RNA sequence: GGGAACGACUCGAGUAGAGUCGAAAACGGGAAGAUAUGUAGGGCGCACGGCGGAUGCCUUGGCACAGGAAGCCGAUGAAGGACGCGGCAAGCUGCGAUAAUCCGCGGUUAGGGGCACACACCCUUCCAUCCACUCUCGAUUCGUCGAGAGUGGAUGAAAAGAAACAACAACAACAAC
Reactivity to 2A3 in 0.01 (KOAc 150mM, MgCl2 10mM, bicine 150mM(pH8.5), 24C), signal-to-noise 4, nucleotides 027 to 126: c020g010g030g010a080a000g060a090u100a060u230g100u140a100g030g000g020c040g000c020a030c040g070g000c020g020g030a030u090g020c000c010u050u100g050g020c030a020c020a060g080g010a100a020g020c020c020g020a040u070g030a040a070g050g020a030c060g000c000g030g000c020a030a050g010c040u050g010c000g000a010u080a100a030u060c020c000g000c010g010g010u020u080a040g010g000g030g020c020a020c000a010c000a020c060c000c000u030u010c020
Reactivity to DMS in 0.01 (KOAc 150mM, MgCl2 10mM, bicine 150mM(pH8.5), 24C), signal-to-noise 4, nucleotides 027 to 126: c070g020g020g010a090a050g000a040u010a010u040g010u010a080g000g020g000c070g000c070a090c070g000g020c010g010g020a060u040g000c040c030u010u000g020g000c020a120c100a120g030g010a150a120g000c000c010g010a070u020g030a140a090g000g000a090c110g000c000g010g010c100a070a090g020c000u000g000c030g010a120u030a090a120u010c070c000g000c020g010g010u010u010a100g000g010g010g000c070a050c090a130c150a110c030c010c020u030u000c060
This 177-nucleotide RNA was probed chemically with 2A3 and DMS. The 2A3 profile rests on 5,074 reads. It was measured as part of the RMDB library RFM100. As a SHAPE reagent, 2A3 marks flexible, mostly unpaired nucleotides at the ribose 2'-OH. For DMS, 6,920 sequencing reads were counted. Conditions: 150 mM KOAc, 10 mM MgCl2 and 150 mM bicine (pH 8.5), 24 C.